[RMDB]
RNA sequence: GGGAACGACUCGAGUAGAGUCGAAAACACAUUCUAUUCGUAGAAUGUGGAACGUAGAGAGAUCGACAGCGUCGCAGCUAUGUCGAACGAGGAUGAGCGCGCAGGGAUCGGGCUUCGGCCCGAUCAAAUCUUUCUAAAAGUUCGCUUUUAGAAAGAUAAAAGAAACAACAACAACAAC
Reactivity to DMS in 0.01 (KOAc 150mM, MgCl2 10mM, bicine 150mM(pH8.5), 24C), signal-to-noise 4, nucleotides 027 to 126: c010a010c000a010u000u000c000u010a030u000u010c180g010u000a010g000a010a000u000g020u000g010g000a080a050c100g000u000a090g000a110g010a110g000a080u000c030g000a050c040a060g000c040g000u000c220g000c160a120g000c040u000a070u000g010u000c010g000a040a100c080g000a100g010g000a070u000g010a050g020c020g010c080g010c110a090g010g000g000a020u000c000g020g000g000c000u000u000c190g030g010c000c010c000g000a000u000c010a030a050
Reactivity to 2A3 in 0.01 (KOAc 150mM, MgCl2 10mM, bicine 150mM(pH8.5), 24C), signal-to-noise 2, nucleotides 027 to 126: c000a000c000a010u020u000c010u020a020u080u080c150g090u030a000g010a010a010u000g000u000g000g050a080a020c020g050u120a020g040a010g010a000g010a210u030c010g010a010c000a010g030c020g080u150c090g000c100a060g000c020u110a100u230g030u020c000g010a060a040c030g020a040g090g030a060u060g030a030g030c060g000c000g030c030a020g160g060g010a010u000c000g000g010g000c000u030u050c150g090g000c000c000c000g010a000u010c000a000a020
The record gives the reactivity of an RNA of 177 nucleotides to DMS and 2A3. Values cover nucleotides 27 to 126. For 2A3 the reverse transcriptase was SuperScript II with manganese. It was measured as part of the RMDB library M2PK50. For 2A3, 2,898 sequencing reads were counted.